[RMDB]
RNA sequence: GGGAACGACUCGAGUAGAGUCGAAAAACCAUCCAGAACGGCAUGCGAAAGGAUGGGAGAGCCAUCCAUCCGAAACGUACGCGGAUGGGAAAGCAUGCUAACGAGGCCCAUCCGAAACGUACGCCAUAGCUCGUGGAUGGGAAAGCAUGCGGGCAUGUAGCGAUUAUUUAUUCGUAAAUAAUCGCUAAAAAGAAACAACAACAACAAC
Reactivity to DMS in 0.01 (KOAc 150mM, MgCl2 10mM, bicine 150mM(pH8.5), 24C), signal-to-noise 2, nucleotides 027 to 156: a060c010c010a000u000c010c000a140g030a130a060c020g020g000c030a100u000g040c040g010a140a140a220g030g020a050u000g030g000g000a110g020a220g030c040c060a110u000c000c000a040u000c000c000g000a060a100a100c060g040u010a010c050g030c030g000g010a030u000g010g000g000a030a070a140g000c000a030u000g000c030u010a120a100c100g010a180g000g000c000c000c000a030u020c000c020g020a020a080a170c000g010u000a000c020g040c010c130a090u000a120g040c020u000c030g010u000g020g010a030u010g010g000g010a030a050a030g030c030a040u010g000c050g000g010g060c070a100u010g000
Reactivity to 2A3 in 0.01 (KOAc 150mM, MgCl2 10mM, bicine 150mM(pH8.5), 24C), signal-to-noise 3, nucleotides 027 to 156: a000c010c000a010u010c020c010a010g010a160a040c040g040g000c010a040u040g010c050g140a160a050a070g020g000a020u010g010g030g010a080g020a030g090c010c030a030u040c010c000a010u000c000c000g070a090a060a050c090g090u120a030c070g010c000g030g000a000u000g000g010g010a050a000a000g010c010a010u070g020c030u060a090a020c080g070a050g150g000c010c000c000a000u020c010c000g020a110a090a010c000g010u020a010c010g040c050c020a110u100a080g030c040u080c220g050u050g000g020a010u010g020g000g000a040a010a000g020c030a010u070g000c020g040g030g000c040a020u150g050